[RMDB]
RNA sequence: GGGAACGACUCGAGUAGAGUCGAAAACCCUGUCUCCUCGGUUCUUCUUCGAUCCGGACCGGCUCAUCUCGGCAAGAGGCGGCAGUCCUCAGUACUCUUACUCUUUCCUAUAAAGAGGAGACUGCUGGAUACUAUAGACGUUCGCGUCUAUAGUAUCAAAAGAAACAACAACAACAAC
Reactivity to DMS in 0.01 (KOAc 150mM, MgCl2 10mM, bicine 150mM(pH8.5), 24C), signal-to-noise 3, nucleotides 027 to 126: c050c060c000u010g020u000c020u000c010c020u000c010g020g000u000u010c060u000u010c060u000u000c120g040a070u000c070c060g000g020a100c040c050g000g000c060u000c100a090u010c100u000c100g020g010c110a130a140g020a050g000g010c080g000g020c050a040g010u010c010c040u010c030a050g010u000a030c120u010c010u010u000a130c030u000c020u010u000u000c140c110u010a130u010a060a020a060g020a010g000g000a030g010a020c050u010g010c080u000g000
Reactivity to 2A3 in 0.01 (KOAc 150mM, MgCl2 10mM, bicine 150mM(pH8.5), 24C), signal-to-noise 3, nucleotides 027 to 126: c010c000c000u010g010u020c020u000c000c000u010c010g030g050u020u040c020u120u020c020u120u130c060g060a060u010c020c020g010g040a070c020c000g020g000c040u030c020a110u030c030u020c030g030g010c050a090a020g010a000g060g000c000g010g000c020a000g040u020c000c000u010c000a010g020u040a040c000u010c020u060u030a300c010u030c000u070u160u020c020c030u140a140u130a300a050a000g010a000g000g000a000g000a000c000u000g010c010u030g030